Conditions: 150 mM KOAc, 10 mM MgCl2 and 150 mM bicine (pH 8.5), 24 C. This 177-nucleotide RNA was probed chemically with DMS and 2A3. Reactivities are rounded to 0.1 and cut off at 0 and 3.
RNA sequence: GGGAACGACUCGAGUAGAGUCGAAAAUCUUUUCCAGGACAUCGUAUGCGCGGGACAUGCUGAUGUCAUCGAUGGAUGGAUCAAGGACUAUGAUACUGCCCUUCGAGAUUACAUUGGCCUUGCCUAAAAUACUCGGUGGUUUCGACCACCGAGUAUUAAAAGAAACAACAACAACAAC
Reactivity to DMS in 0.01 (KOAc 150mM, MgCl2 10mM, bicine 150mM(pH8.5), 24C), signal-to-noise 1, nucleotides 027 to 126: u000c030u010u000u000u000c010c010a080g000g000a030c020a000u000c010g000u000a010u000g000c040g070c120g000g000g000a260c000a000u000g030c000u010g020a020u000g040u000c030a000u000c100g010a150u000g000g020a060u000g000g010a020u000c050a050a000g000g010a040c030u000a050u020g000a160u000a040c100u000g000c040c040c120u000u000c100g010a070g000a150u000u000a090c030a040u010u010g010g030c010c050u000u010g020c030c040u010a060a070
Reactivity to 2A3 in 0.01 (KOAc 150mM, MgCl2 10mM, bicine 150mM(pH8.5), 24C), signal-to-noise 2, nucleotides 027 to 126: u000c010u040u290u070u000c000c020a030g060g000a000c000a020u010c010g010u010a010u000g050c070g010c090g070g020g040a010c010a010u010g000c120u210g010a010u000g010u000c000a010u060c010g170a120u080g020g010a000u030g010g000a000u040c010a020a030g010g020a000c010u010a060u060g040a060u060a140c060u100g100c020c030c000u090u150c110g140a150g010a070u080u050a060c000a030u010u030g020g020c000c000u040u040g000c010c000u060a200a110